RNA sequence: GGGAACGACUCGAGUAGAGUCGAAAAGCAGCUCACAGCCCAGAGGACGCCCAGAGCGGCAGCGCGCAGACAGACGGACCGACGGACUCCGCCGCGUCCACCUGUCUGCCCGGCCCGGCACUGCGCGGAUAUACUUAUAGUUCGCUAUAAGUAUAUCAAAAGAAACAACAACAACAAC
Reactivity to 2A3 in 0.01 (KOAc 150mM, MgCl2 10mM, bicine 150mM(pH8.5), 24C), signal-to-noise 4, nucleotides 027 to 126: g010c020a010g030c020u010c030a070c030a030g040c000c010c000a020g020a050g060g040a030c040g000c000c080c020a020g010a020g050c000g030g000c020a040g110c020g010c010g000c010a010g000a010c000a000g020a010c060g000g000a000c010c030g020a020c020g040g180a300c090u040c080c010g010c000c000g040c060g000u000c000c000a020c010c000u010g000u000c000u000g000c010c000c000g020g000c010c010c000g110g030c020a020c030u050g000c030g000c010g060
Reactivity to DMS in 0.01 (KOAc 150mM, MgCl2 10mM, bicine 150mM(pH8.5), 24C), signal-to-noise 6, nucleotides 027 to 126: g010c080a070g000c030u000c040a090c090a110g010c020c000c020a110g010a100g010g000a210c050g010c020c040c020a080g010a090g020c030g010g000c040a050g000c100g020c210g010c000a010g000a030c000a010g010a080c040g000g000a020c010c000g000a020c000g000g000a190c130u010c020c000g030c000c000g010c170g000u000c000c000a090c040c000u000g000u000c000u000g000c000c030c020g000g000c040c010c030g010g010c030a080c020u000g010c220g010c040g010

This 177-nucleotide RNA was probed chemically with 2A3 and DMS.
For 2A3 the reverse transcriptase was SuperScript II with manganese.
DMS adducts were read by reverse transcription with MarathonRT.
Reactivities are rounded to 0.1 and cut off at 0 and 3.
It was measured as part of the RMDB library RFMREP.
The reactions ran in a buffer of 150 mM KOAc, 10 mM MgCl2 and 150 mM bicine (pH 8.5), at 24 C.